RNA sequence: GGGAACGACUCGAGUAGAGUCGAAAAGACGUGGAGGUUCCGCGCCCUCCUUUGCGCGUAAGUACGUCGAAAUUCGGUGCUUUGGAUCGCACCGUUAGAUCCAUUUGAUAUCCGCUUAGUGCCGCGGUUGGGCAUUUACACUUACCCGAAAGGGGAAGGGUGAGUCCUGAUUCGUCAGGACUCACCCAAAAGAAACAACAACAACAAC
Reactivity to 2A3 in 0.01 (KOAc 150mM, MgCl2 10mM, bicine 150mM(pH8.5), 24C), signal-to-noise 1, nucleotides 027 to 156: g000a000c000g030u040g000g010a070g210g090u120u020c080c000g030c000g000c020c080c000u060c020c090u010u080u260g020c060g000c010g020u050a070a110g140u020a000c000g000u020c010g030a000a000a040u080u050c020g000g000u000g000c020u110u130u160g060g040a040u080c030g000c080a020c000c000g000u000u020a020g020a030u010c030c000a020u030u040u030g170a140u170a100u090c040c000g090c020u000u040a040g020u020g080c000c000g030c020g030g000u000u060g080g030g030c070a090u000u000u150a040c080a000c010u000u100a040c000c000c010g020a020a000a040g000g010g010g000a000a110
This 207-nucleotide RNA was probed chemically with 2A3. 2A3 adducts were read by reverse transcription with SuperScript II with manganese. For 2A3, 544 sequencing reads were counted. The data come from the RNA Mapping Database (RMDB), library OK3TST.